[RMDB]
RNA sequence: GGGAACGACUCGAGUAGAGUCGAAAAAUUAAGCGAGAUGGUAGAACUGAAGGUGUUGAUUUAAAUAAAAUUACCAACCGAAUUCGUUUAUUGUGCAAUGAUUUAUCGACCACGGUAGAUCCUGUCAAGAUUAGUGUUGAAACAGUGCGUAAUAUCAAUGAGGAAAUUCAUUCGUGAAUUUCCUCAUAAAAGAAACAACAACAACAAC
Reactivity to DMS in 0.01 (KOAc 150mM, MgCl2 10mM, bicine 150mM(pH8.5), 24C), signal-to-noise 2, nucleotides 027 to 156: a130u000u000a080a150g030c020g000a090g010a100u000g000g040u000a080g020a070a080c060u020g020a090a080g030g000u000g010u020u000g010a070u000u000u000a090a070a160u000a090a070a150a110u010u000a060c010c030a000a100c010c010g010a070a200u000u000c020g010u000u000u020a090u000u010g000u010g000c060a080a100u000g000a110u020u000u000a070u000c030g010a140c140c150a050c120g030g000u000a030g000a030u000c000c080u000g030u000c080a070a160g010a100u000u000a110g000u000g040u020u000g000a130a030a080c020a010g010u010g010c000g010u000a040a140u000a100u010c080a120
Reactivity to 2A3 in 0.01 (KOAc 150mM, MgCl2 10mM, bicine 150mM(pH8.5), 24C), signal-to-noise 1, nucleotides 027 to 156: a000u080u020a090a000g000c010g000a030g020a030u030g000g050u080a040g000a150a080c020u070g010a040a050g050g010u070g010u090u060g030a160u120u090u170a100a140a040u130a030a020a000a000u050u020a020c000c020a000a000c030c100g000a090a010u060u110c020g050u040u110u070a060u040u080g000u000g040c010a050a030u060g000a010u010u010u050a030u020c030g030a020c060c080a160c020g010g040u030a020g000a050u010c010c000u050g010u030c030a060a020g000a120u030u090a000g110u080g010u090u030g000a070a050a000c000a000g010u010g040c000g010u020a030a000u100a040u150c060a040
About this RNA
This 207-nucleotide RNA was probed chemically with DMS and 2A3. The data come from the RNA Mapping Database (RMDB), library OK3TST. For DMS, 2,416 sequencing reads were counted. The RNA was probed in 150 mM KOAc, 10 mM MgCl2 and 150 mM bicine (pH 8.5) at 24 C.